[RMDB]
RNA sequence: GGGAACGACUCGAGUAGAGUCGAAAAGAAAGAAACAGUUGGCUAGCCGAACGCACGAGGAUUAAAGCCAACCGGGCGAGUCGGAAAGCACGACCGACAAGAAAAGCCCUACAAUCGUGCAAGAAAAGCUAUCAUGACUGUUCGCAGUCAUGAUAGCAAAAGAAACAACAACAACAAC
Reactivity to DMS in 0.01 (KOAc 150mM, MgCl2 10mM, bicine 150mM(pH8.5), 24C), signal-to-noise 2, nucleotides 027 to 126: g000a080a110a010g000a070a110a070c160a120g000u000u000g000g000c050u000a120g020c070c030g020a090a100c120g030c050a020c160g040a090g000g000a050u020u000a070a210a090g000c040c000a000a090c000c260g000g000g000c050g000a100g040u000c000g000g030a050a080a020g000c090a110c000g000a160c000c000g050a000c000a200a020g000a060a130a070a200g000c000c010c000u020a050c140a090a060u020c030g020u010g080c000a060a050g030a230a020a150a030
Reactivity to 2A3 in 0.01 (KOAc 150mM, MgCl2 10mM, bicine 150mM(pH8.5), 24C), signal-to-noise 3, nucleotides 027 to 126: g030a000a030a000g110a010a080a020c130a030g000u000u000g010g000c000u010a000g080c020c040g040a160a070c130g020c120a030c130g060a150g050g010a030u120u170a200a010a010g010c000c000a000a000c040c000g000g000g020c000g010a030g000u020c010g000g000a130a040a010g030c010a010c010g000a000c010c010g010a000c010a030a010g190a020a080a000a020g010c000c000c000u030a040c090a020a050u060c020g000u000g000c010a000a000g070a000a070a020a000

Overview: This 177-nucleotide RNA was probed chemically with DMS and 2A3. For 2A3 the reverse transcriptase was SuperScript II with manganese. For 2A3, 2,952 sequencing reads were counted.